[RMDB]
RNA sequence: GGGAACGACUCGAGUAGAGUCGAAAAGAGGAUCGUACGAGCGAUCACUCAUGGGAUCAGUACUCUGCGAUCUCCAUGCGACAUGACACACCAUGGCCAUGAUCCAUGGAUCUGAUCCGCUAGGUACCGUGCGGUAUGCGUUCGCGCAUACCGCACGAAAAGAAACAACAACAACAAC
Reactivity to DMS in 0.01 (KOAc 150mM, MgCl2 10mM, bicine 150mM(pH8.5), 24C), signal-to-noise 2, nucleotides 027 to 126: g010a080g000g000a030u000c020g050u000a120c300g040a140g000c040g000a020u000c000a080c030u010c000a210u000g010g010g000a120u030c070a140g030u000a040c000u000c120u020g000c100g000a050u000c060u000c000c010a000u000g020c040g000a060c020a000u000g000a010c010a030c050a130c300c300a150u020g000g000c070c050a030u000g000a210u020c000c000a040u010g000g050a030u000c190u000g000a030u000c060c060g000c050u000a040g000g000u000a070c010
Reactivity to 2A3 in 0.01 (KOAc 150mM, MgCl2 10mM, bicine 150mM(pH8.5), 24C), signal-to-noise 2, nucleotides 027 to 126: g050a000g010g000a020u010c020g020u130a110c200g120a150g050c020g010a020u020c040a190c100u030c020a120u170g080g040g040a050u070c020a030g010u020a040c000u020c020u140g010c030g000a010u020c010u010c010c000a000u010g020c110g010a000c030a030u080g050a010c010a000c000a010c150c060a110u210g000g040c030c030a040u000g050a220u000c000c020a000u000g000g080a020u040c070u160g010a020u050c100c030g000c050u020a050g000g000u010a000c000
An RNA of 177 nucleotides, treated with DMS and 2A3 and read out base by base. Source: RMDB library OK2TRN, as collected in RNAgym. Values cover nucleotides 27 to 126. 2A3 adducts were read by reverse transcription with SuperScript II with manganese. Conditions: 150 mM KOAc, 10 mM MgCl2 and 150 mM bicine (pH 8.5), 24 C. The 2A3 profile rests on 1,647 reads. For DMS, 1,031 sequencing reads were counted.